[RMDB]
RNA sequence: GGGAACGACUCGAGUAGAGUCGAAAAACACGAUCACUCUCACGUGAACGUGUGUGAGAGAUCUCACUCUCACUCUCUCACUCGUGAUCGUUCGAUCGAACUCUCGUUCGAACGUGAGAACACGAGAGUUCGUGAACACGAACGUGUGAUCUCUCUCUAAUCUAGUAGUGUUCGCACUACUAGAUUAAAAAGAAACAACAACAACAAC
Reactivity to DMS in 0.01 (KOAc 150mM, MgCl2 10mM, bicine 150mM(pH8.5), 24C), signal-to-noise 6, nucleotides 027 to 156: a050c020a030c010g020a120u000c020a030c010u000c080u010c090a080c110g030u000g010a060a060c040g040u000g010u000g010u000g010a040g010a030g010a100u000c130u010c220a140c020u000c020u000c010a080c040u000c010u000c010u000c060a100c020u000c030g000u000g000a150u000c000g010u010u000c010g010a090u010c020g020a020a070c060u000c050u000c020g020u000u000c060g020a050a100c050g010u000g020a140g010a080a190c060a080c020g010a040g000a030g020u000u000c010g000u000g000a130a090c060a070c030g000a080a070c080g010u000g020u000g000a080u000c020u000c010u000c000u000c020
Reactivity to 2A3 in 0.01 (KOAc 150mM, MgCl2 10mM, bicine 150mM(pH8.5), 24C), signal-to-noise 9, nucleotides 027 to 156: a000c010a000c010g020a040u010c000a010c010u160c020u070c090a080c200g000u010g020a050a010c010g000u010g000u010g010u010g000a000g000a010g010a090u080c070u060c170a070c040u010c010u000c000a000c000u020c000u000c000u000c020a020c010u010c000g030u020g100a300u010c000g000u020u000c010g000a040u040c000g000a010a010c010u000c010u000c020g010u070u070c080g060a070a010c030g100u170g100a120g010a060a030c050a010c100g000a000g000a000g000u010u010c010g000u010g040a040a020c060a010c100g140a260a030c100g020u040g020u030g150a130u020c040u010c000u000c000u000c020